[RMDB]
RNA sequence: GGGAACGACUCGAGUAGAGUCGAAAAGAUAUGGAGUAGAACUACUCGAACUGUGGUCGAAGAACCGAAGAUGAUCGGAAACGAUCAUCUUCGGGGAGACCAUGAAAUCCGAGCUACUCCUAAGUCAGAUAGCCUAUUGGUUCGCCAAUAGGCUAUCAAAAGAAACAACAACAACAAC
Reactivity to DMS in 0.01 (KOAc 150mM, MgCl2 10mM, bicine 150mM(pH8.5), 24C), signal-to-noise 2, nucleotides 027 to 126: g040a010u000a240u000g020g000a020g000u000a000g030a060a080c060u020a300c000u000c000g010a060a010c140u040g040u010g000g000u010c000g000a120a300g010a220a180c000c000g020a050a010g000a010u000g000a020u020c000g020g000a040a060a080c010g030a000u010c010a000u000c000u000u000c000g000g000g000g000a080g030a010c020c020a000u000g010a100a210a160u010c060c010g000a010g000c000u000a020c010u000c010c010u000a010a040g010u010c020a130
Reactivity to 2A3 in 0.01 (KOAc 150mM, MgCl2 10mM, bicine 150mM(pH8.5), 24C), signal-to-noise 1, nucleotides 027 to 126: g000a000u080a040u140g000g010a040g010u000a000g030a190a050c100u270a060c010u300c030g000a070a030c200u300g000u030g020g000u020c040g020a300a140g050a200a140c000c000g000a000a000g010a010u000g000a000u020c000g000g000a020a020a050c020g000a000u000c010a000u020c000u010u010c030g000g010g010g030a120g010a000c000c000a030u000g100a050a070a000u090c060c000g000a000g020c000u000a000c010u000c000c000u000a080a010g060u020c020a020